[RMDB]
RNA sequence: GGGAACGACUCGAGUAGAGUCGAAAAGGGGUCGAGAAUGAACGAGGUCAAGCUUUUGACGAGCUGAAGCCUCCACGGCUCGAUAAGCUUGACUCCCCACCGUUCAUUCUCGACGGAGGCACCCAAAUGUAACCUAUGGUUUCGACCAUAGGUUACACAGUGAACGUAGUUUCGACUACGUUCACUGAAAAGAAACAACAACAACAAC
Reactivity to 2A3 in 0.01 (KOAc 150mM, MgCl2 10mM, bicine 150mM(pH8.5), 24C), signal-to-noise 5, nucleotides 027 to 156: g050g000g010g000u000c000g000a000g000a000a010u000g000a000a000c000g010a020g000g010u000c000a000a010g000c030u090u210u300u300g190a150c090g010a010g000c010u030g030a090a020g020c010c000u000c000c000a020c000g010g000c000u000c010g030a130u080a300a050g000c000u000u000g000a000c010u020c030c020c010c000a020c020c000g000u000u000c000a000u000u010c000u000c000g000a000c010g000g000a000g000g020c000a030c000c000c010a040a080a050u090g000u000a000a010c000c000u000a010u000g020g040u030u090u220c300g100a010c000c000a000u000a000g000g000u010u000a000c000a000
Reactivity to DMS in 0.01 (KOAc 150mM, MgCl2 10mM, bicine 150mM(pH8.5), 24C), signal-to-noise 2, nucleotides 027 to 156: g010g000g010g020u010c030g030a070g020a040a010u000g000a050a010c050g000a300g020g000u020c010a060a000g020c000u000u000u020u030g000a210c220g010a010g030c010u020g010a050a180g000c000c000u000c020c030a300c060g020g010c010u000c000g060a090u000a020a080g000c000u010u010g010a020c000u010c300c070c060c030a300c080c000g000u000u020c020a020u000u000c000u000c010g020a000c030g020g030a020g060g040c000a050c020c000c000a040a070a110u000g030u010a000a000c030c000u000a000u000g000g010u000u000u000c250g000a040c000c000a000u010a000g020g020u000u000a000c000a030

The record gives the reactivity of an RNA of 207 nucleotides to 2A3 and DMS. For DMS the reverse transcriptase was MarathonRT. Conditions: 150 mM KOAc, 10 mM MgCl2 and 150 mM bicine (pH 8.5), 24 C. Source: RMDB library RNAMAK, as collected in RNAgym. The DMS profile rests on 2,807 reads. 2A3 adducts were read by reverse transcription with SuperScript II with manganese.